[RMDB]
RNA sequence: GGGAACGACUCGAGUAGAGUCGAAAAGUGCCUCGUCGGCCCGGCAUGCCAACCUGAUCCGAAGUUCAAGGUGGUUUCUCUGGCCUUCCAGAGAGAUGCGCGUCGGAGGAACCGACGAACAAACCUUAAAACAAAACGACGUUCGCGUCGUUUUGAACGGACGAGAUAUGUUCGCAUAUCUCGUCCGAAAAGAAACAACAACAACAAC
Reactivity to 2A3 in 0.01 (KOAc 150mM, MgCl2 10mM, bicine 150mM(pH8.5), 24C), signal-to-noise 1, nucleotides 027 to 156: g070u020g040c000c010u030c020g010u010c010g000g020c000c020c000g020g000c040a030u090g000c050c040a060a130c010c010u010g020a060u060c010c160g200a250a080g090u070u060c070a070a090g000g000u000g000g010u010u110u000c000u000c000u020g000g020c030c090u240u290c020c000a020g000a000g000a000g020a130u210g040c050g020c050g000u020c000g000g040a110g050g000a020a020c000c000g000a000c000g000a010a010c050a010a040a060c000c010u170u270a050a210a020a020c010a000a000a000a000c000g010a010c000g000u020u140c190g010c020g150u020c000g000u000u020u000u000g000a030a010

Chemical mapping of a 207-nucleotide RNA with 2A3. Conditions: 150 mM KOAc, 10 mM MgCl2 and 150 mM bicine (pH 8.5), 24 C. For 2A3, 759 sequencing reads were counted.